[RMDB]
RNA sequence: GGGAACGACUCGAGUAGAGUCGAAAAGGCUGGCGCACCGACCUGUACGCGACUUGCGGCACAGUCAUGGAGCACUCGGAGCAUAUUGCGCUGGUCGAAGCUCUGGGUCUACGGCACACGCCAGAGCUCAAGGCGCCGAUGGUGACGAUGCCGUUUGUCUGUGUACUAGGUUCGCCUAGUACACAGAAAAAGAAACAACAACAACAAC
Reactivity to 2A3 in 0.01 (KOAc 150mM, MgCl2 10mM, bicine 150mM(pH8.5), 24C), signal-to-noise 3, nucleotides 027 to 156: g040g000c030u040g020g000c000g000c010a030c040c040g030a040c000c030u010g040u100a050c010g020c010g060a210c060u050u190g010c020g030g000c080a020c040a100g030u050c030a120u090g180g040a110g080c060a010c050u020c090g060g000a050g040c070a100u070a090u150u120g000c000g000c000u000g000g040u030c050g020a010a020g000c000u000c010u000g000g020g010u000c040u080a050c040g020g000c040a010c000a000c060g050c000c000a020g010a000g010c000u000c030a060a040g030g010c020g000c000c000g070a080u100g050g040u050g030a050c040g030a070u010g000c010c000g010u030u050u120g060
Reactivity to DMS in 0.01 (KOAc 150mM, MgCl2 10mM, bicine 150mM(pH8.5), 24C), signal-to-noise 2, nucleotides 027 to 156: g040g000c020u020g030g020c030g080c020a270c130c020g010a050c070c020u000g050u010a020c030g040c000g000a040c060u000u010g040c030g000g030c090a100c100a110g050u000c010a090u020g020g030a240g030c050a070c020u000c040g020g020a230g000c040a100u000a160u000u010g010c000g010c000u000g020g000u010c060g010a100a120g000c000u000c010u000g000g050g010u000c010u000a040c000g020g020c050a100c010a160c060g040c010c000a030g000a040g000c030u020c060a070a140g040g010c020g010c000c010g000a130u020g000g000u000g000a090c020g000a190u010g010c020c000g000u000u010u000g000